RNA sequence: GGGAACGACUCGAGUAGAGUCGAAAAGGCAGCCAUAGAACCUGGAAUAUUCUCAACAAUAUUUAAGCCAGCAUGGACAGUAGCCACAGGGAUGCCAAACUGGGGCUGGCCCAGGAAAGCCGUGGACAGAGCAGCAGGAGCUCCCUGCUGGCUGGCCAAGACUAAUUGUAUUCGUACAAUUAGUCUUAAAAGAAACAACAACAACAAC
Reactivity to DMS in 0.01 (KOAc 150mM, MgCl2 10mM, bicine 150mM(pH8.5), 24C), signal-to-noise 1, nucleotides 027 to 156: g000g020c020a120g000c010c040a130u010a110g010a130a130c040c020u000g040g020a060a030u000a020u000u010c000u010c280a090a070c050a030a030u010a050u000u000u010a100a170g030c000c000a080g030c000a120u000g020g010a090c080a090g030u000a120g010c020c040a050c090a020g000g030g010a090u000g050c020c050a120a060a090c020u000g000g010g050g030c010u000g000g020c010c000c000a090g020g030a050a070a150g040c020c040g020u000g010g000a060c000a040g010a110g010c010a020g000c020a030g040g020a300g020c160u000c090c000c020u000g030c010u000g000g020c020u010g000g000c020c010
Reactivity to 2A3 in 0.01 (KOAc 150mM, MgCl2 10mM, bicine 150mM(pH8.5), 24C), signal-to-noise 2, nucleotides 027 to 156: g010g010c020a010g050c010c010a030u080a100g070a070a070c040c020u010g000g010a060a000u070a050u150u050c110u060c080a050a180c050a080a060u070a100u150u240u190a100a030g030c000c010a000g000c010a020u090g010g040a070c020a030g070u090a010g020c000c020a050c030a030g030g000g070a080u200g040c050c010a140a080a010c030u010g000g000g100g000c010u010g010g040c010c000c040a000g000g000a080a070a020g080c020c020g030u040g010g000a020c020a030g040a040g160c020a010g000c000a030g020g050a030g020c010u040c000c000c000u020g010c030u010g000g070c010u000g000g000c020c000

Structure probing data (DMS and 2A3) for a 207-nucleotide construct. The reactions ran in a buffer of 150 mM KOAc, 10 mM MgCl2 and 150 mM bicine (pH 8.5), at 24 C. As a SHAPE reagent, 2A3 marks flexible, mostly unpaired nucleotides at the ribose 2'-OH. For 2A3 the reverse transcriptase was SuperScript II with manganese. Values cover nucleotides 27 to 156.